[RMDB]
RNA sequence: GGGAACGACUCGAGUAGAGUCGAAAAGCAGUCCGACUUAGGUCACUGCGAACACGACAGGGCUGGAUUGUCACCUGGAGUGGAUUAGGACGGACUACUCCGUCUUAGGACAGUAGGACGUCCGAAAGGCAAGCAGGACCUUCGGGUCUUGCUUGCCAAAAGAAACAACAACAACAAC
Reactivity to DMS in 0.01 (KOAc 150mM, MgCl2 10mM, bicine 150mM(pH8.5), 24C), signal-to-noise 3, nucleotides 027 to 126: g000c010a010g010u000c140c120g010a070c040u000u010a120g050g010u000c020a070c000u000g000c000g010a110a060c030a010c010g020a120c000a030g020g000g020c070u040g000g010a170u010u030g000u020c010a180c030c030u000g000g000a200g010u000g000g020a100u010u030a080g010g000a000c000g000g000a040c020u020a000c000u000c120c190g010u000c020u030u050a120g020g020a000c000a050g020u000a000g000g000a040c020g010u000c000c000g010a030a090a080
Reactivity to 2A3 in 0.01 (KOAc 150mM, MgCl2 10mM, bicine 150mM(pH8.5), 24C), signal-to-noise 3, nucleotides 027 to 126: g000c000a010g020u150c080c050g030a110c140u060u070a100g100g020u040c060a000c000u000g000c000g000a030a010c000a000c000g040a000c000a030g030g020g090c030u070g150g090a250u120u100g080u090c050a050c080c010u010g010g000a020g010u010g000g030a050u070u180a040g000g000a000c010g000g020a000c010u010a000c010u080c090c030g030u010c020u040u050a070g000g040a010c020a030g000u000a000g000g020a010c010g000u000c000c000g010a010a000a000